[RMDB]
RNA sequence: GGGAACGACUCGAGUAGAGUCGAAAAAAAGAAGACCCUGUUGAGCUUGACUCUAGUCUGAUAUUGCAUAGUGACCUAAAAGGUGUAGAAUAGGUGGGAGGGGCAACCCGACGGUGAAAUACCACCCUUGGUUAAGUACAUUCGUGUACUUAACCAAAAAAGAAACAACAACAACAAC
Reactivity to 2A3 in 0.01 (KOAc 150mM, MgCl2 10mM, bicine 150mM(pH8.5), 24C), signal-to-noise 2, nucleotides 027 to 126: a000a000a000g100a000a000g120a050c010c000c000u000g010u050u000g030a020g000c070u080u070g090a120c000u010c000u020a040g040u000c030u040g030a050u110a110u260u100g010c050a000u130a060g090u050g120a000c000c000u080a150a130a040a000g110g060u020g000u020a060g040a080a050u110a030g030g000u010g000g000g000a040g030g020g000g030c010a010a060c010c020c050g020a020c050g040g000u040g020a000a120a000u170a050c060c000a030c030c000c000
Reactivity to DMS in 0.01 (KOAc 150mM, MgCl2 10mM, bicine 150mM(pH8.5), 24C), signal-to-noise 8, nucleotides 027 to 126: a060a060a060g010a160a080g010a080c020c030c020u010g010u020u000g000a060g020c040u000u010g010a100c060u010c020u020a070g000u010c030u010g010a100u020a060u010u010g010c050a080u010a070g010u020g000a060c040c020u000a070a050a080a070g000g020u010g000u020a050g010a080a070u000a050g010g010u000g000g000g000a120g010g000g010g000c140a060a070c020c010c020g010a080c190g000g000u010g000a060a070a120u010a070c040c020a080c010c020c220